[RMDB]
Structure probing data (DMS and 2A3) for a 177-nucleotide construct. 2A3 adducts were read by reverse transcription with SuperScript II with manganese.

RNA sequence: GGGAACGACUCGAGUAGAGUCGAAAACGGAGUUGAGCAUCCGCAGACGGACCUGCUCGGAGAUGGGUCGCGGCUCCCACACACGACGGUCCAGGCGCUCCUGGGUGUCGGCUGCGGUCUCUGCCAGUCCAGAUAAGUGAUUCGUCACUUAUCUGGAAAAAGAAACAACAACAACAAC
Reactivity to DMS in 0.01 (KOAc 150mM, MgCl2 10mM, bicine 150mM(pH8.5), 24C), signal-to-noise 7, nucleotides 027 to 126: c100g010g000a080g020u000u000g010a040g010c300a080u010c010c000g000c030a030g000a100c040g010g000a020c030c050u000g010c180u000c120g010g000a050g000a130u000g000g000g000u000c030g000c020g000g000c100u000c040c020c030a080c130a090c090a170c050g010a090c030g010g000u000c010c010a060g010g010c200g000c070u000c010c030u000g010g000g010u000g000u010c010g000g000c020u000g010c030g000g000u000c010u010c020u000g000c020c040a190g000
Reactivity to 2A3 in 0.01 (KOAc 150mM, MgCl2 10mM, bicine 150mM(pH8.5), 24C), signal-to-noise 6, nucleotides 027 to 126: c040g050g050a190g170u250u090g030a020g030c060a080u070c010c000g000c010a010g010a030c010g020g010a010c000c020u100g060c130u100c080g000g010a030g010a050u060g000g000g020u040c010g010c010g080g000c040u100c010c060c000a050c010a010c000a010c020g300a040c010g010g010u020c000c010a020g140g050c160g010c060u030c010c020u090g050g000g000u080g110u110c020g010g020c010u010g000c000g000g020u010c010u010c000u010g010c000c010a030g040
The RNA was probed in 150 mM KOAc, 10 mM MgCl2 and 150 mM bicine (pH 8.5) at 24 C.